Background: An RNA of 207 nucleotides, treated with 2A3 and read out base by base. It was measured as part of the RMDB library OK3TST.
[RMDB]
RNA sequence: GGGAACGACUCGAGUAGAGUCGAAAAGAGUUUCAGACAAUUUCAAGAAAGAGUUUUGCAAACACUUUUACAACAGGGAGAUAGGACUUGAGACUUUCGCACGUUUCCAGAUAGCCCUUGAGGAAGUUCUAAACAACGAGUGUUUCAAUCUGUUUAACCAUUACUGUUGCUUCGGCAACAGUAAUGGAAAAGAAACAACAACAACAAC
Reactivity to 2A3 in 0.01 (KOAc 150mM, MgCl2 10mM, bicine 150mM(pH8.5), 24C), signal-to-noise 1, nucleotides 027 to 156: g050a000g000u060u040u080c120a020g070a000c040a010a150u140u280u280c160a220a170g100a050a110a010g060a050g010u010u140u180u020g080c120a060a010a000c050a000c020u050u080u250u290a090c030a060a000c010a010g070g010g000a100g100a110u080a050g000g150a060c040u050u050g010a010g010a030c000u110u180u100c230g000c040a010c090g000u010u010u020c020c000a000g030a060u030a050g020c000c010c000u010u120g010a030g010g000a050a000g020u100u020c070u150a070a160a070c050a050a000c040g010a030g070u000g000u020u070u040c000a000a020u000c000u020g060u070u100u030a040a030